Conditions: 150 mM KOAc, 10 mM MgCl2 and 150 mM bicine (pH 8.5), 24 C. Structure probing data (2A3 and DMS) for a 177-nucleotide construct. Values cover nucleotides 27 to 126. It was measured as part of the RMDB library OK1LIB. DMS adducts were read by reverse transcription with MarathonRT.
RNA sequence: GGGAACGACUCGAGUAGAGUCGAAAAUCUGAAUCAAACUCUAUCUUUAAGUAUCCUAUAUGCAUGAGUUAUGUCGAUUAUAUCGAAGACUCGGUGUGUGAUAUUACUCCACAGUACAAAAACAGGAAAUCAGGUGCAGUUUCGACUGCACCUGAUUAAAAGAAACAACAACAACAAC
Reactivity to 2A3 in 0.01 (KOAc 150mM, MgCl2 10mM, bicine 150mM(pH8.5), 24C), signal-to-noise 3, nucleotides 027 to 126: u020c010u030g120a060a060u150c050a060a030a090c080u020c000u020a020u110c050u090u190u110a120a020g000u010a030u120c000c000u100a110u000a000u180g040c040a050u140g000a000g000u010u010a080u240g100u000c000g040a020u070u170a150u300a160u300c000g040a010a000g020a040c030u000c010g000g030u030g010u020g000u000g070a040u080a010u130u150a100c030u020c070c020a060c000a020g060u100a090c060a010a090a010a110a000c080a000g030g190a040
Reactivity to DMS in 0.01 (KOAc 150mM, MgCl2 10mM, bicine 150mM(pH8.5), 24C), signal-to-noise 1, nucleotides 027 to 126: u000c120u000g000a180a070u080c120a010a120a080c100u000c100u000a060u000c000u000u000u000a030a030g000u010a000u030c000c120u000a040u060a040u000g020c060a060u030g000a050g000u020u000a000u170g010u060c000g000a080u000u000a160u000a300u000c000g000a010a180g000a000c000u000c000g000g000u010g000u000g000u000g000a060u000a160u000u010a020c070u030c040c000a070c100a010g030u000a070c230a140a000a070a070a070c300a000g000g000a060

For 2A3 the reverse transcriptase was SuperScript II with manganese.